[RMDB]
RNA sequence: GGGAACGACUCGAGUAGAGUCGAAAAACGAGCCAUACGUGGCUCGAAUUGGAUAUAUGAUAAUCUCACUCCAACUUUAACUCUCUCACUGAUUAUUUGAUAAUAAUAACAGGUCAGAUAUCCUGAACAGUCCACAGCCAUUCGUGGCUGUGGACUGAAAAGAAACAACAACAACAAC
Reactivity to 2A3 in 0.01 (KOAc 150mM, MgCl2 10mM, bicine 150mM(pH8.5), 24C), signal-to-noise 1, nucleotides 027 to 126: a010c000g000a000g010c010c000a000u000a050c210g080u000g000g000c000u000c000g060a000a000u010u010g000g000a000u000a010u010a020u160g090a000u140a140a010u010c000u000c010a080c000u030c040c090a020a020c030u180u230u080a170a120c000u000c000u000c000u000c000a000c050u040g010a090u060u090a010u030u030u000g110a180u100a300a080u150a060a000u100a000a000c000a050g010g010u030c000a000g010a090u010a110u050c000c000u100g000a040a040
Source information:
Structure probing data (2A3) for a 177-nucleotide construct. Conditions: 150 mM KOAc, 10 mM MgCl2 and 150 mM bicine (pH 8.5), 24 C. The 2A3 profile rests on 458 reads. For 2A3 the reverse transcriptase was SuperScript II with manganese.